[RMDB]
RNA sequence: GGGAACGACUCGAGUAGAGUCGAAAAUAAACCAUGUUACCAUUCAUCAAGGUGCUAAAAAGGUUAACUGAUGGUUGUCUUCUCAGUUCUUCAAAUGACUUCAAUCAUGCAGAGACGCUGCUCAGCCGCUGCAAACUUACUUCGGUAAGUUUGCAGCAAAAGAAACAACAACAACAAC
Reactivity to 2A3 in 0.01 (KOAc 150mM, MgCl2 10mM, bicine 150mM(pH8.5), 24C), signal-to-noise 2, nucleotides 027 to 126: u150a050a080a000c030c000a030u040g050u050u180a040c010c010a030u090u190c000a020u040c030a020a130g070g000u020g120c040u150a160a070a100a000a090g070g030u110u060a090a000c060u200g040a020u000g000g030u000u040g000u000c090u060u000c010u000c040a030g030u050u040c000u130u020c060a000a000a240u160g000a070c000u060u010c100a050a170u060c000a010u040g020c060a020g010a030g020a060c040g000c030u020g020c000u010c050a020g060c050c100
Reactivity to DMS in 0.01 (KOAc 150mM, MgCl2 10mM, bicine 150mM(pH8.5), 24C), signal-to-noise 1, nucleotides 027 to 126: u070a010a090a080c000c000a040u010g010u000u000a010c000c000a000u000u010c080a000u100c080a200a000g000g000u000g000c020u030a000a040a160a140a090g070g000u000u000a100a110c060u000g000a000u050g000g000u000u000g000u000c090u070u000c010u010c010a070g000u000u000c000u030u000c040a070a220a070u020g000a050c000u000u020c130a110a130u000c050a070u000g080c090a160g010a060g040a000c110g000c010u010g000c010u000c190a030g040c060c240
Structure probing data (2A3 and DMS) for a 177-nucleotide construct. Values cover nucleotides 27 to 126. For DMS, 1,383 sequencing reads were counted. The RNA was probed in 150 mM KOAc, 10 mM MgCl2 and 150 mM bicine (pH 8.5) at 24 C. It was measured as part of the RMDB library OK1LIB. For DMS the reverse transcriptase was MarathonRT.